[RMDB]
RNA sequence: GGGAACGACUCGAGUAGAGUCGAAAAGGGGUCGAACCCUAUAAUCUCGAGCGGUCAACAGCUAUACUGAAGCCUCCACGGUAUAGACAUGACCGACUCGAGGUAGGGUUCGACGGAGGCACCCAAACGAUGUUGAUGCUUCGGCAUCAACAUCGAAGAAGUACUGAUGGUUCGCCAUCAGUACUUCAAAAGAAACAACAACAACAAC
Reactivity to 2A3 in 0.01 (KOAc 150mM, MgCl2 10mM, bicine 150mM(pH8.5), 24C), signal-to-noise 1, nucleotides 027 to 156: g020g010g080g010u000c000g000a000a000c010c000c000u040a080u050a140a100u100c000u000c000g020a030g030c010g000g040u040c030a170a080c020a300g020c020u000a010u010a010c000u010g090a160a050g000c000c010u010c000c010a020c000g000g000u020a000u030a020g070a150c090a230u300g010a010c050c020g150a180c000u000c000g000a000g020g010u000a000g000g000g000u000u000c000g000a000c010g000g000a010g010g000c000a040c000c000c000a040a080a010c060g000a000u000g010u010u000g000a000u010g010c070u100u120c300g090g000c000a000u000c000a000a000c000a000u000c000g000a020a050
Source information:
This 207-nucleotide RNA was probed chemically with 2A3. The reactions ran in a buffer of 150 mM KOAc, 10 mM MgCl2 and 150 mM bicine (pH 8.5), at 24 C. For 2A3, 1,600 sequencing reads were counted.